Conditions: 150 mM KOAc, 10 mM MgCl2 and 150 mM bicine (pH 8.5), 24 C. Structure probing data (DMS and 2A3) for a 207-nucleotide construct. 2A3 adducts were read by reverse transcription with SuperScript II with manganese. The data come from the RNA Mapping Database (RMDB), library OK3TST. The DMS profile rests on 3,172 reads.
[RMDB]
RNA sequence: GGGAACGACUCGAGUAGAGUCGAAAAAACAGCAAAACCUACUUUCAGAAAAAUGUAUCUGAACGUGCUGCCCAGGGUGGGUUGGAAGAGGAAGGGCUUUACAAGAAUCUAGUACCUUCCCUGACAGAAAAUCAUAGUGACAGUCACUGUACCCUUACUGCUAAAUUUUAUUCGUAAAAUUUAGCAGAAAAGAAACAACAACAACAAC
Reactivity to DMS in 0.01 (KOAc 150mM, MgCl2 10mM, bicine 150mM(pH8.5), 24C), signal-to-noise 2, nucleotides 027 to 156: a030a020c040a080g020c050a100a100a080a080c010c030u000a070c050u020u000u000c010a050g000a020a100a130a140a180u000g030u000a080u000c000u000g030a030a020c060g050u000g020c000u000g010c030c070c040a070g030g050g010u000g010g000g030u020u000g010g030a140a080g000a130g010g000a030a030g020g010g000c000u000u000u040a160c080a070a100g020a140a150u000c050u000a080g010u000a090c000c000u000u000c000c000c000u000g010a180c060a120g010a070a090a060a220u000c070a080u000a030g020u000g000a050c030a120g000u000c010a060c010u000g000u000a100c040c040c030u000u000a080
Reactivity to 2A3 in 0.01 (KOAc 150mM, MgCl2 10mM, bicine 150mM(pH8.5), 24C), signal-to-noise 3, nucleotides 027 to 156: a000a000c030a020g000c030a030a080a160a150c040c010u050a080c050u050u050u030c030a070g080a090a290a070a130a130u190g090u090a130u010c010u000g000a010a000c000g080u040g000c020u020g000c000c010c010a030g020g000g060u070g010g040g040u020u090g040g020a070a010g060a080g010g000a010a000g010g000g000c030u010u090u050a090c080a100a060g080a100a070u030c030u050a020g020u080a300c000c000u010u000c000c000c000u010g010a010c000a040g090a070a150a020a020u160c070a080u070a150g080u050g090a070c090a050g030u070c020a020c030u000g000u090a080c000c000c050u040u120a080